[RMDB]
RNA sequence: GGGAACGACUCGAGUAGAGUCGAAAAGGCGAGGUCUUCGGACCUCGCCAAAUGACCGCCAUUAUUGGCUAAGGCUACACGGACGCCCGGGUCAAAUGCCGAAAACUUCCGCCUUCGGGCGGAAGAACCAACUAAUUCACUUCGGUGAAUUAGUUGGAAAAGAAACAACAACAACAAC
Reactivity to 2A3 in 0.01 (KOAc 150mM, MgCl2 10mM, bicine 150mM(pH8.5), 24C), signal-to-noise 1, nucleotides 027 to 126: g030g050c020g060a010g070g050u040c050u100u190c300g100g000a010c000c000u000c000g050c040c040a000a030a000u010g020a020c000c060g070c000c000a110u130u200a110u300u250g020g000c010u060a130a090g000g020c020u030a020c070a040c070g050g080a040c030g060c040c040c000g050g000g000u000c000a020a070a070u110g000c050c000g070a060a060a090a070c010u020u000c000c020g050c030c000u030u070c140g080g000g030c030g000g000a000a000g000a000a000

Annotation: Chemical mapping of a 177-nucleotide RNA with 2A3. The 2A3 profile rests on 726 reads. For 2A3 the reverse transcriptase was SuperScript II with manganese. The reactions ran in a buffer of 150 mM KOAc, 10 mM MgCl2 and 150 mM bicine (pH 8.5), at 24 C. Values cover nucleotides 27 to 126.